Structure probing data (DMS and 2A3) for a 207-nucleotide construct. The DMS profile rests on 2,634 reads. Values cover nucleotides 27 to 156.

RNA sequence: GGGAACGACUCGAGUAGAGUCGAAAAAUUCGCCGAGAAGCCUCUGUUCGAAAUCAUCGGGAGUGAUCCAGAUGACGGUCCUGCCAUGAGACCGCAACGAUAGCAUGUCGCAUCGAAUGGACUCGGGUAUACUAGGUGACGUUCGCGUCACCUAGAACAGUUCACAGAUGUUCGCAUCUGUGAACUGAAAAGAAACAACAACAACAAC
Reactivity to DMS in 0.01 (KOAc 150mM, MgCl2 10mM, bicine 150mM(pH8.5), 24C), signal-to-noise 2, nucleotides 027 to 156: a100u000u000c010g050c020c010g000a050g010a050a030g000c030c120u010c020u000g000u000u000c060g010a040a100a090u010c000a030u000c010g020g060g010a060g020u000g000a240u000c000c000a060g020a030u000g030a040c010g010g010u000c000c000u000g040c060c300a190u000g000a020g000a020c010c050g050c020a090a030c030g010a030u000a130g020c170a150u000g030u000c090g000c040a240u000c020g010a080a190u000g010g000a080c060u000c010g020g000g090u030a080u000a110c000u000a010g000g030u000g010a020c020g020u010u010c300g080c070g020u000c010a010c000c000u110a000g000a000a120
Reactivity to 2A3 in 0.01 (KOAc 150mM, MgCl2 10mM, bicine 150mM(pH8.5), 24C), signal-to-noise 3, nucleotides 027 to 156: a000u110u060c030g030c000c010g010a020g040a070a030g100c050c020u000c020u030g050u030u030c030g040a070a080a040u020c010a010u020c030g050g000g000a030g050u110g040a110u020c000c020a040g040a070u010g020a020c010g000g010u000c020c000u080g180c060c050a100u120g030a080g000a210c000c010g030c070a070a020c000g050a010u060a080g130c120a110u240g040u120c050g000c060a030u010c000g000a000a040u030g000g000a010c020u000c010g020g000g000u020a060u040a130c020u000a000g000g010u010g020a010c010g020u030u030c190g040c010g120u010c000a000c000c000u000a000g000a000a000
The data come from the RNA Mapping Database (RMDB), library M2RFPK.
DMS adducts were read by reverse transcription with MarathonRT.